[RMDB]
RNA sequence: GGGAACGACUCGAGUAGAGUCGAAAAGGCGAUCGAACGACGGGGCAUACAAGGUCCUCUACACAAUGACCGUAGCGCGAGCUACCAGUAAGAAGUAGAGGAAGCCGAUGUUCCGUCGUACGUUUUGACUAGCAUUAGCGUUCGCGCUAAUGCUAGUAAAAGAAACAACAACAACAAC
Reactivity to DMS in 0.01 (KOAc 150mM, MgCl2 10mM, bicine 150mM(pH8.5), 24C), signal-to-noise 2, nucleotides 027 to 126: g000g010c030g010a060u020c040g020a160a030c010g010a040c000g010g000g000g020c000a000u000a070c180a100a170g000g010u000c000c000u000c000u000a010c000a070c080a070a190u000g010a080c300c190g030u000a000g000c020g010c300g000a270g020c010u030a020c000c020a030g000u010a040a010g000a060a120g000u000a010g020a010g000g010a020a060g000c020c060g000a010u010g000u010u000c010c010g000u000c010g010u020a010c010g020u000u000u010u000g000

An RNA of 177 nucleotides, treated with DMS and read out base by base.
For DMS, 1,362 sequencing reads were counted.
The RNA was probed in 150 mM KOAc, 10 mM MgCl2 and 150 mM bicine (pH 8.5) at 24 C.